RNA sequence: GGGAACGACUCGAGUAGAGUCGAAAAGAGGUUAAUGACGUACAGGACAUAGUCCUUGACCUGCUUGGGCUCCAGCCCGCAGACUGGACCGCACUCUUGGAAUGCCAGGUCAACGAAAGCCUCCUCGUCCAAUGCUCGUAUUCGUACGAGCAUUGGAAAAAGAAACAACAACAACAAC
Reactivity to 2A3 in 0.01 (KOAc 150mM, MgCl2 10mM, bicine 150mM(pH8.5), 24C), signal-to-noise 2, nucleotides 027 to 126: g040a010g020g040u090u110a170a080u200g090a070c040g020u100a110c090a140g020g000a030c040a230u190a080g030u000c010c010u000u030g020a010c010c000u030g020c050u110u130g050g000g000c050u000c010c030a030g000c030c000c060g080c040a030g030a080c000u020g020g010a000c020c030g000c060a110c040u150c020u060u130g090g080a090a020u090g050c050c010a000g020g000u000c020a030a000c030g010a060a010a040g040c000c010u030c010c010u020c010g060
Reactivity to DMS in 0.01 (KOAc 150mM, MgCl2 10mM, bicine 150mM(pH8.5), 24C), signal-to-noise 2, nucleotides 027 to 126: g000a030g000g030u000u000a110a100u000g010a160c020g010u010a190c200a060g010g010a080c060a140u010a120g000u000c000c020u000u000g000a060c030c000u000g010c080u000u010g020g000g030c190u000c030c070a040g000c020c000c300g000c250a030g000a080c040u000g000g000a050c030c030g000c030a030c100u000c030u010u000g000g000a050a040u000g020c030c010a010g020g000u000c000a060a070c070g000a120a090a120g060c030c020u000c000c020u000c090g020
An RNA of 177 nucleotides, treated with 2A3 and DMS and read out base by base. For 2A3 the reverse transcriptase was SuperScript II with manganese. DMS adducts were read by reverse transcription with MarathonRT. High DMS reactivity at an A or C suggests that its Watson-Crick edge is free. For 2A3, 2,351 sequencing reads were counted. The RNA was probed in 150 mM KOAc, 10 mM MgCl2 and 150 mM bicine (pH 8.5) at 24 C. Source: RMDB library OK2TST, as collected in RNAgym.